Structure probing data (2A3 and DMS) for a 177-nucleotide construct.
The 2A3 profile rests on 3,743 reads.
It was measured as part of the RMDB library M2PK50.

[RMDB]
RNA sequence: GGGAACGACUCGAGUAGAGUCGAAAACGUGUCUCGUUCGCGAGACACGAAAGGGAAAUGGACUGAGCGGCGCCCACCGCCAAACAACCGGCAAAAUAAAUAAAACCAUAAACUUCGGUUUAUGGAACGUAUGUAACCUGUUCGCAGGUUACAUACGAAAAGAAACAACAACAACAAC
Reactivity to 2A3 in 0.01 (KOAc 150mM, MgCl2 10mM, bicine 150mM(pH8.5), 24C), signal-to-noise 3, nucleotides 027 to 126: c000g010u010g000u000c000u010c000g020u050u050c160g020c000g100a000g000a010c000a000c010g000a020a010a010g080g000g050a020a110a090u140g060g040a030c080u080g010a030g050c010g010g000c000g000c030c000c000a010c000c010g000c000c000a020a080a030c020a030a040c000c010g070g000c060a120a120a060a060u150a100a110a000u160a030a080a070a080c000c000a000u000a000a020a000c010u060u080c270g050g000u000u000u000a000u000g000g010a010a020
Reactivity to DMS in 0.01 (KOAc 150mM, MgCl2 10mM, bicine 150mM(pH8.5), 24C), signal-to-noise 2, nucleotides 027 to 126: c060g030u000g000u000c000u000c010g000u010u020c200g010c030g000a000g010a030c000a010c000g000a010a060a070g000g000g000a080a070a080u000g010g030a170c060u010g000a100g000c000g000g000c020g010c000c020c020a260c000c000g020c010c040a070a110a060c080a010a110c080c030g010g000c140a100a090a050a070u010a050a060a100u000a040a060a090a130c000c000a000u010a000a000a010c000u010u000c170g020g000u000u000u000a000u010g000g000a020a080